[RMDB]
RNA sequence: GGGAACGACUCGAGUAGAGUCGAAAAGCCGAGCGACUCGGCGGUGUGGCGCAGGCCAAGCACCUUACGCUCAGAAGCUUCGUACGCGUCUUGAAGCUUAAGCGCACUGAGCCGCUCAUGAAGCUGCCACGGUACGCAGCUUCGGCUGCGUACCGUGAAAAGAAACAACAACAACAAC
Reactivity to DMS in 0.01 (KOAc 150mM, MgCl2 10mM, bicine 150mM(pH8.5), 24C), signal-to-noise 1, nucleotides 027 to 126: g020c050c040g000a020g070c020g020a020c040u000c060g060g000c120g010g030u000g070u000g010g010c000g000c300a000g020g000c000c000a210a100g000c070a020c000c000u060u000a290c110g010c000u000c200a000g000a190a040g000c000u000u000c000g000u090a120c100g000c140g000u060c120u000u000g000a010a080g000c000u010u080a300a040g000c040g000c300a230c000u010g000a050g000c000c000g060c080u000c000a070u000g010a040a040g000c000u000g000c020
Reactivity to 2A3 in 0.01 (KOAc 150mM, MgCl2 10mM, bicine 150mM(pH8.5), 24C), signal-to-noise 2, nucleotides 027 to 126: g080c030c030g010a000g000c000g030a020c020u000c010g070g000c100g040g000u030g040u110g020g030c050g030c080a070g000g170c020c030a030a060g100c010a020c010c010u090u100a010c050g020c000u000c030a110g070a170a000g000c010u000u040c020g070u090a110c150g010c020g170u060c110u090u300g000a020a010g000c000u000u030a050a010g040c030g000c010a000c060u010g010a000g000c000c000g000c000u010c010a070u180g040a030a020g000c000u050g050c040